Overview: This 207-nucleotide RNA was probed chemically with DMS and 2A3. The reactions ran in a buffer of 150 mM KOAc, 10 mM MgCl2 and 150 mM bicine (pH 8.5), at 24 C. For DMS the reverse transcriptase was MarathonRT. 2A3 adducts were read by reverse transcription with SuperScript II with manganese. It was measured as part of the RMDB library M2RFPK. For 2A3, 1,283 sequencing reads were counted.
RNA sequence: GGGAACGACUCGAGUAGAGUCGAAAAAUCCGUGGAUAUCGGGUGCGCACCGCUCCUCCUCCGGCUGUUCUCCUUCACAGCUAUGACCCAUGCGCCCCACAGGCAGUGUCCCGCUUCGUGUGCAAAAAAAACCGCCAGUACUUCGGUACUGGCGGAAGUGAUUAACUAAGUUCGCUUAGUUAAUCACAAAAGAAACAACAACAACAAC
Reactivity to DMS in 0.01 (KOAc 150mM, MgCl2 10mM, bicine 150mM(pH8.5), 24C), signal-to-noise 1, nucleotides 027 to 156: a030u000c020c010g010u020g050g010a130u000a050u000c010g000g030g040u010g000c000g040c050a140c060c040g000c030u000c020c060u010c050c030u000c040c060g030g030c020u010g000u000u000c050u020c040c070u010u000c050a080c000a080g000c040u000a040u020g020a050c010c010c020a060u000g000c020g010c030c000c000c050a080c050a150g010g030c060a100g000u000g010u010c020c000c030g020c110u000u000c050g030u000g040u020g040c010a000a000a000a080a030a050a130a160c000c000g050c020c000a040g020u000a000c000u000u010c270g040g010u010a000c000u000g000g040c000g000g000a000a000
Reactivity to 2A3 in 0.01 (KOAc 150mM, MgCl2 10mM, bicine 150mM(pH8.5), 24C), signal-to-noise 2, nucleotides 027 to 156: a000u020c000c000g010u090g000g050a100u010a100u190c050g000g050g020u090g040c020g030c020a080c090c030g030c080u050c000c010u030c000c020u010c010c050g030g010c020u060g000u070u020c070u080c040c020u140u100c050a020c020a070g000c020u060a090u160g030a080c000c040c000a030u080g040c040g020c020c000c050c020a060c000a010g000g050c020a020g010u000g030u120c020c040c030g000c010u040u050c040g110u030g030u020g030c010a020a010a010a020a000a000a010a110c000c000g010c010c000a000g010u000a000c000u010u090c150g070g010u000a000c000u030g000g050c000g010g010a000a000